[RMDB]
RNA sequence: GGGAACGACUCGAGUAGAGUCGAAAAGUACUAUGCCCGCCAUUAUUGAUGCAUGCUCCACCUCCCACUCCUUAAUAGUUGCUUUGAAGUUUCCAUUCGGUGGGUUCUGCAGCGUCUUUAUCAGAAACUUACCGGACCAAUUCGUUGGUCCGGUAAGAAAAGAAACAACAACAACAAC
Reactivity to DMS in 0.01 (KOAc 150mM, MgCl2 10mM, bicine 150mM(pH8.5), 24C), signal-to-noise 1, nucleotides 027 to 126: g020u010a040c040u000a100u000g010c010c020c040g020c140c050a080u010u000a080u000u000g000a040u000g010c030a090u000g030c010u000c020c020a050c030c000u000c000c000c030a060c110u030c010c050u000u020a080a070u000a050g010u000u000g010c060u000u010u020g000a100a110g010u000u000u000c000c020a090u000u010c110g020g010u000g010g040g000u000u000c070u030g020c020a070g040c050g020u000c010u020u040u000a100u030c150a070g010a110a060a090